[RMDB]
RNA sequence: GGGAACGACUCGAGUAGAGUCGAAAACUCCAGUGGUAUCUGACACGGUUCGUCGACGAAGCGUUCGUUCAGGAACCGAGCAUCAGCGACGAGGAGUGGCUCUCACGGUCGCUGGCGACAGCCCUCCUACUCCAGGUAUAUUCGUAUACCUGGAGUAAAAAGAAACAACAACAACAAC
Reactivity to 2A3 in 0.01 (KOAc 150mM, MgCl2 10mM, bicine 150mM(pH8.5), 24C), signal-to-noise 9, nucleotides 027 to 126: c020u020c020c010a030g040u130g140g040u090a110u140c010u020g010a020c010a010c090g050g060u020u020c040g100u080c120g090a120c030g020a090a080g190c070g210u100u040c020g010u080u060c080a050g100g010a010a010c000c010g010a020g000c020a080u080c010a000g010c010g050a030c010g040a170g050g010a020g020u080g050g010c030u020c000u010c120a040c060g090g030u030c020g010c060u020g010g000c010g010a020c020a030g030c010c000c000u010c010c010
Reactivity to DMS in 0.01 (KOAc 150mM, MgCl2 10mM, bicine 150mM(pH8.5), 24C), signal-to-noise 9, nucleotides 027 to 126: c040u000c010c020a210g020u010g010g020u000a050u000c030u000g000a070c110a150c020g000g000u000u000c010g010u010c250g010a070c040g010a030a140g010c160g010u000u000c060g010u000u000c130a120g010g000a020a020c020c010g000a120g010c090a110u000c020a020g000c030g010a030c020g010a180g000g000a030g010u000g010g000c110u010c020u000c030a110c100g010g010u000c030g000c030u000g000g010c070g000a070c100a070g010c020c010c050u000c030c040